[RMDB]
About this RNA
The data come from the RNA Mapping Database (RMDB), library OK2TST. Structure probing data (2A3 and DMS) for a 177-nucleotide construct. The 2A3 profile rests on 1,416 reads. The reactions ran in a buffer of 150 mM KOAc, 10 mM MgCl2 and 150 mM bicine (pH 8.5), at 24 C. The DMS profile rests on 2,387 reads. For DMS the reverse transcriptase was MarathonRT. Reactivities are given for positions 27 through 126.
RNA sequence: GGGAACGACUCGAGUAGAGUCGAAAACGGUCGCUGGGUGGACACGGAGGCGGAUUGCGCCGGUGAAUUCGGGUGCGUACCCGAUCUCGACGGCCGGUGCUGCCGGUGCCUCGAAGGCCGCCGGCUAGCACCUGGAGCCGUUCGCGGCUCCAGGUGCAAAAGAAACAACAACAACAAC
Reactivity to 2A3 in 0.01 (KOAc 150mM, MgCl2 10mM, bicine 150mM(pH8.5), 24C), signal-to-noise 2, nucleotides 027 to 126: c010g020g050u050c050g000c030u110g100g040g000u090g040g000a030c040a030c110g050g060a070g000g050c000g040g030a060u040u130g040c010g020c010c010g050g000u090g020a100a070u090u040c010g020g010g010u080g090c110g080u120a050c000c000c000g010a000u010c030u010c140g190a160c050g050g000c000c000g000g010u040g000c010u030g020c010c010g060g090u100g030c000c010u030c040g020a070a050g030g030c050c000g040c000c000g000g020c000u020a010
Reactivity to DMS in 0.01 (KOAc 150mM, MgCl2 10mM, bicine 150mM(pH8.5), 24C), signal-to-noise 2, nucleotides 027 to 126: c070g010g010u010c210g030c020u010g020g010g020u000g000g000a080c080a080c080g020g000a120g010g020c010g000g010a100u000u000g010c030g010c020c000g000g030u000g010a070a150u000u000c000g030g000g010u000g040c270g020u010a050c000c000c010g010a010u000c060u000c050g020a080c100g000g000c000c000g000g000u000g020c030u000g010c010c010g010g020u000g010c000c000u000c160g020a190a190g000g020c060c030g020c010c010g010g000c020u000a040